[RMDB]
RNA sequence: GGGAACGACUCGAGUAGAGUCGAAAAACACAGUUGUGGCCGAGUUAAUAGCCCUGGGUAUAGUAACAAUGUUGAAUAUGACUCUUAAUUGAGGAAAUGGGUGAUCCGCAGCCAAAUCCUAAGGACACGUAUAACUAAAAUUCGUUUUAGUUAUACGAAAAGAAACAACAACAACAAC
Reactivity to 2A3 in 0.01 (KOAc 150mM, MgCl2 10mM, bicine 150mM(pH8.5), 24C), signal-to-noise 6, nucleotides 027 to 126: a000c060a010c010a040g030u040u040g020u040g060g030c010c020g010a020g040u050u090a130a100u060a160g000c000c000c010u040g090g000g010u100a130u040a120g120u060a090a030c030a100a120u140g030u060u080g070a100a020u140a060u130g070a030c010u000c000u020u110a100a080u210u080g010a010g020g040a000a070a040u070g010g000g000u010g020a060u040c010c020g000c020a010g040c000c000a030a030a000u010c000c000u030a030a040g080g010a020c010a010
Reactivity to DMS in 0.01 (KOAc 150mM, MgCl2 10mM, bicine 150mM(pH8.5), 24C), signal-to-noise 9, nucleotides 027 to 126: a090c090a080c110a090g000u000u000g020u010g010g020c040c030g000a090g010u000u010a050a060u020a100g000c010c010c010u010g010g010g010u010a030u010a080g010u010a050a060c080a070a090u010g010u010u000g010a080a070u020a070u010g000a120c030u000c000u000u000a070a110u010u010g000a040g000g000a040a050a120u010g010g010g010u000g000a080u020c040c070g010c040a100g000c020c020a030a050a150u000c010c020u000a070a070g010g000a090c210a130
The record gives the reactivity of an RNA of 177 nucleotides to 2A3 and DMS.
DMS adducts were read by reverse transcription with MarathonRT.
It was measured as part of the RMDB libraries RFM100 and RFMREP.
The RNA was probed in 150 mM KOAc, 10 mM MgCl2 and 150 mM bicine (pH 8.5) at 24 C.